[RMDB]
RNA sequence: GGGAACGACUCGAGUAGAGUCGAAAACUCCAUUGCUUCGGCAAUGGAGAAACAGGACGUGAGACCGAAACGGAGGUACGUCCAACUACCUUCUCACAAAAAAAACGCUUAGGUUCGCCUAAGCGAAGUAUAACUGGCUGUUCGCAGCCAGUUAUACAAAAGAAACAACAACAACAAC
Reactivity to DMS in 0.01 (KOAc 150mM, MgCl2 10mM, bicine 150mM(pH8.5), 24C), signal-to-noise 2, nucleotides 027 to 126: c020u000c010c000a000u000u000g010c000u000u000c220g000g000c000a000a010u000g000g000a000g010a010a100a030c220a210g020g000a050c050g010u000g000a080g010a110c030c000g000a070a120a130c300g010g010a100g010g020u030a030c010g000u000c000c000a100a090c190u000a190c060c050u030u010c050u020c000a140c130a060a000a000a040a040a060a130a190c020g020c000u000u000a000g000g030u000u010c220g040c020c000u000a000a010g000c010g010a010a010
Reactivity to 2A3 in 0.01 (KOAc 150mM, MgCl2 10mM, bicine 150mM(pH8.5), 24C), signal-to-noise 2, nucleotides 027 to 126: c000u010c000c000a000u000u010g010c000u050u020c180g160g000c000a000a000u010g020g000a000g000a000a000a000c040a010g010g000a010c020g020u050g010a090g070a090c030c020g100a300a220a020c180g040g010a060g050g050u120a010c020g010u040c020c000a010a030c020u090a020c000c010u040u040c030u040c010a080c040a010a050a020a030a020a050a000a050c030g000c000u000u000a000g040g000u050u060c220g070c070c000u000a010a000g000c000g000a000a000